[RMDB]
An RNA of 177 nucleotides, treated with DMS and 2A3 and read out base by base. For 2A3, 745 sequencing reads were counted. 2A3 is a SHAPE reagent: it acylates the 2'-hydroxyl of flexible nucleotides of all four kinds. The DMS profile rests on 759 reads. The data come from the RNA Mapping Database (RMDB), library OK2TRN. Values cover nucleotides 27 to 126.

RNA sequence: GGGAACGACUCGAGUAGAGUCGAAAAAGCAAUUGCAGCGUCGAGGUCGAGUUGGACGAACUUGUCCAGGUGGGUAUCUAUACACAUCAGUUGGAACCCCGUUGAUGUAUAAACUUGACCCAGAUUCUGCCUCAUACACCUUCGGGUGUAUGAGGCAAAAAGAAACAACAACAACAAC
Reactivity to DMS in 0.01 (KOAc 150mM, MgCl2 10mM, bicine 150mM(pH8.5), 24C), signal-to-noise 1, nucleotides 027 to 126: a050g000c070a120a070u030u000g020c090a020g000c020g000u000c000g050a290g010g000u010c030g000a060g010u000u000g000g020a000c080g000a030a150c300u000u020g010u000c010c000a060g010g050u020g010g000g020u000a060u030c040u010a050u010a030c050a010c070a120u000c030a070g040u000u000g010g000a070a110c060c020c010c030g000u000u020g000a060u000g030u000a040u000a080a070a080c040u000u000g030a020c000c000c040a240g000a100u000u000c090
Reactivity to 2A3 in 0.01 (KOAc 150mM, MgCl2 10mM, bicine 150mM(pH8.5), 24C), signal-to-noise 1, nucleotides 027 to 126: a030g010c000a030a100u110u140g050c070a070g000c010g040u040c000g000a070g010g010u010c000g010a000g020u050u040g050g010a030c060g060a200a300c170u190u200g030u090c000c020a030g000g020u150g100g020g010u010a190u050c010u010a030u170a080c030a000c010a270u240c040a030g010u000u030g030g000a010a020c000c030c010c050g060u090u060g090a130u130g060u230a170u070a150a080a040c000u000u010g000a000c040c000c000a000g000a040u050u010c010